[RMDB]
RNA sequence: GGGAACGACUCGAGUAGAGUCGAAAAAGUACUAAAAGUAUGAGUUAUUAAGCCAUCCCAACUUAAUAACCAUGUAAAAUUAGCAAGUGAGUAACAUUUGCUAGUAGAGUUAGUUUCCUUGGACUCACACUAUUAUGGGCUUCGGCCCAUAAUAGUGAAAAGAAACAACAACAACAAC
Reactivity to 2A3 in 0.01 (KOAc 150mM, MgCl2 10mM, bicine 150mM(pH8.5), 24C), signal-to-noise 1, nucleotides 027 to 126: a000g030u030a000c060u070a010a000a030a230g170u100a060u040g040a080g080u000u010a000u010u010a020a010g000c000c030a070u000c050c000c000a000a020c000u020u000a010a010u010a010a000c010c000a000u040g050u050a030a080a120a190u000u000a010g000c000a000a000g010u000g110a080g110u060a140a170c030a010u060u000u000g000c050u010a000g010u040a030g010a030g010u030u090a020g010u000u060u020c030c070u020u040g110g020a020c000u000c030a030
Reactivity to DMS in 0.01 (KOAc 150mM, MgCl2 10mM, bicine 150mM(pH8.5), 24C), signal-to-noise 1, nucleotides 027 to 126: a140g020u010a050c040u000a030a030a080a150g000u010a020u010g000a240g020u000u010a000u000u000a000a010g010c020c030a080u000c000c010c000a160a230c000u000u000a000a000u000a000a040c000c000a040u000g000u020a090a050a090a020u000u000a000g000c010a000a010g040u000g000a270g020u000a120a110c000a000u000u000u000g010c010u010a000g000u000a050g000a040g000u000u000a010g000u000u000u000c010c010u000u000g010g040a030c060u000c110a220